[RMDB]
RNA sequence: GGGAACGACUCGAGUAGAGUCGAAAAUUGGCGAAUGCCUGUGGAUCUACAUUUGUUGCGGGUUCGAUACCCGUCAGAGCCCGGCUCUGUAGCUCAAUGGUAGAGCGGUGUAUUCACAUAAACUUGUAAAAGACACGUGCCUUCGGGCACGUGUCAAGAUUACCAAAUUGUUCGCAAUUUGGUAAUCAAAAGAAACAACAACAACAAC
Reactivity to 2A3 in 0.01 (KOAc 150mM, MgCl2 10mM, bicine 150mM(pH8.5), 24C), signal-to-noise 3, nucleotides 027 to 156: u070u050g030g000c030g100a230a060u300g010c000c040u020g010u010g010g020a010u010c030u110a040c020a050u060u070u130g070u040u030g020c010g000g000g000u010u020c020g010a000u020a050c010c000c000g020u000c010a000g000a010g000c100c240c050g100g010c020u000c020u000g040u030a020g010c010u010c020a040a090u200g110g070u200a020g000a000g010c010g000g000u030g020u000a030u010u030c000a030c010a030u190a080a100a080c040u100u080g070u170a030a120a040a030g010a000c000a000c000g010u000g030c000c000u060u060c150g030g000g020c050a000c000g000u000g020u000c000a000a000
Reactivity to DMS in 0.01 (KOAc 150mM, MgCl2 10mM, bicine 150mM(pH8.5), 24C), signal-to-noise 1, nucleotides 027 to 156: u000u000g010g030c010g000a080a060u010g010c030c040u000g030u000g060g010a080u000c020u020a010c030a070u000u000u040g020u020u020g000c000g020g000g030u000u000c100g010a300u000a040c010c000c000g010u000c030a090g020a070g040c000c160c050g090g000c020u000c030u000g000u010a090g000c020u000c020a080a100u010g030g000u000a040g020a060g050c000g000g000u010g010u010a070u010u010c040a020c020a060u000a070a080a120c090u000u000g020u030a080a090a130a150g000a010c000a000c040g000u000g020c070c000u000u000c280g000g020g000c000a010c000g010u000g000u010c000a000a030